[RMDB]
RNA sequence: GGGAACGACUCGAGUAGAGUCGAAAAAGUCAAUAGAUGCCCCAAAGUUUCCACUGCCCCAUCCUCUGCCCUCUCUGACUGCCCUCCAGUUCUUCCCUGGCAAGCUCUGGGGUAUUGGUAGGAGGAGUCUUAAAGGACUCUUCGGAGUCCUUUAAGAAAAAGAAACAACAACAACAAC
Reactivity to DMS in 0.01 (KOAc 150mM, MgCl2 10mM, bicine 150mM(pH8.5), 24C), signal-to-noise 2, nucleotides 027 to 126: a100g020u000c040a060a100u000a100g020a080u000g010c050c000c000c050a060a070a110g000u000u010u000c020c020a130c120u000g000c030c020c010c040a090u010c040c000u010c050u000g010c030c030c070u010c040u000c040u010g000a140c030u000g000c040c010c030u000c030c020a090g010u000u000c050u000u010c030c040c040u000g000g000c100a060a070g000c070u000c040u010g020g010g010g010u010a030u010u000g010g020u000a040g000g000a220g010g000a070g010